[RMDB]
RNA sequence: GGGAACGACUCGAGUAGAGUCGAAAAGAUAUGGAACGAACUACGCUUGAAGAGGCGUUGAAAUCGGAAACGAUGGAGCCUUGGAGGAGCGCGUUCCUAAGUCAAAACCCACACUUCGGUGUGGGAACUAGUCCUGUAUCUUCGGAUACAGGACUAGAAAAGAAACAACAACAACAAC
Reactivity to 2A3 in 0.01 (KOAc 150mM, MgCl2 10mM, bicine 150mM(pH8.5), 24C), signal-to-noise 3, nucleotides 027 to 126: g020a020u070a050u160g010g000a020a000c020g010a040a050c110u170a060c290g010c000u030u070g010a060a000g010a030g010g030c020g090u210u080g030a040a040a000u010c010g010g050a040a050a010c030g000a010u030g040g010a020g000c000c020u000u010g050g010a120g150g190a000g020c010g030c000g010u000u010c000c000u040a180a020g060u000c020a000a040a110a270c000c030c010a000c000a000c000u040u150c300g110g000u000g000u010g000g000g000a010a020
Reactivity to DMS in 0.01 (KOAc 150mM, MgCl2 10mM, bicine 150mM(pH8.5), 24C), signal-to-noise 3, nucleotides 027 to 126: g010a020u000a300u000g000g010a010a010c000g020a140a090c140u010a250c030g010c000u000u000g000a300a150g010a020g020g010c000g000u000u030g000a040a080a010u010c000g020g000a080a080a200c000g000a020u000g000g020a120g020c010c010u000u020g010g000a250g000g000a010g010c030g040c000g010u000u000c000c000u010a030a070g000u020c030a130a050a170a150c000c000c000a000c000a010c000u000u040c160g010g000u000g000u000g000g000g010a000a040